[RMDB]
RNA sequence: GGGAACGACUCGAGUAGAGUCGAAAAGGCAGGAGUAGAAUGGGCCCAAUCUAGGGUCUCACUGCAGGCCAGAUGCUACUUUUGUUUGGCGCACGGCCUGGUGAGUGAUCCGGCUGUGUUCUCCGCGCAAUAUUUUAUAUUUCGAUAUAAAAUAUUGAAAAGAAACAACAACAACAAC
Reactivity to 2A3 in 0.01 (KOAc 150mM, MgCl2 10mM, bicine 150mM(pH8.5), 24C), signal-to-noise 7, nucleotides 027 to 126: g030g000c020a010g000g030a010g020u120a040g090a230a080u150g020g020g000c020c000c000a060a120u150c090u200a090g000g000g010u000c000u020c010a010c010u090g010c010a010g030g000c010c000a010g010a030u040g000c010u000a030c000u110u070u110u150g130u060u090u090g040g000c000g000c010a010c030g000g000c000c000u010g000g020u050g040a030g000u060g020a020u010c000c000g010g000c000u020g020u010g000u040u000c040u000c010c010g020c010g000
Reactivity to DMS in 0.01 (KOAc 150mM, MgCl2 10mM, bicine 150mM(pH8.5), 24C), signal-to-noise 9, nucleotides 027 to 126: g010g010c000a040g000g000a040g010u020a050g010a120a100u040g010g000g010c000c010c010a120a130u050c200u030a130g000g010g010u000c000u000c010a020c000u010g010c020a020g010g010c010c000a080g010a180u020g010c000u000a020c060u010u030u030u030g010u030u020u000g010g000c080g020c080a150c130g000g010c000c010u000g020g020u010g000a040g010u010g010a070u000c010c010g010g010c020u000g010u010g010u010u000c010u010c010c070g010c200g000